[RMDB]
RNA sequence: GGGAACGACUCGAGUAGAGUCGAAAAGUUUUACAUACGGGUCAGACACGGCUAGAGGCCAAGGUCAAGUUGAAAGCUGCAGUCUAGCCAGUGUGCGAACUGCAAGCCCGGAGACUCAGGACCCCCUGAGAGUCAAAGACUUCGGUCUUUGACUCUCAAAAGAAACAACAACAACAAC
Reactivity to 2A3 in 0.01 (KOAc 150mM, MgCl2 10mM, bicine 150mM(pH8.5), 24C), signal-to-noise 2, nucleotides 027 to 126: g050u040u030u030u140a030c030a050u230a080c140g000g000g000u010c000a000g000a060c000a010c100g000g000c040u120a010g050a030g300g000c010c020a030a000g130g010u030c020a040a040g040u080u090g000a070a030a000g000c000u010g000c000a040g020u000c190u060a060g000c040c060a240g010u080g080u120g030c030g060a130a000c020u020g010c010a150a040g000c000c000c050g020g000a010g000a010c020u010c020a010g220g000a020c010c000c000c000c020u030

Chemical mapping of a 177-nucleotide RNA with 2A3. For 2A3 the reverse transcriptase was SuperScript II with manganese. For 2A3, 604 sequencing reads were counted.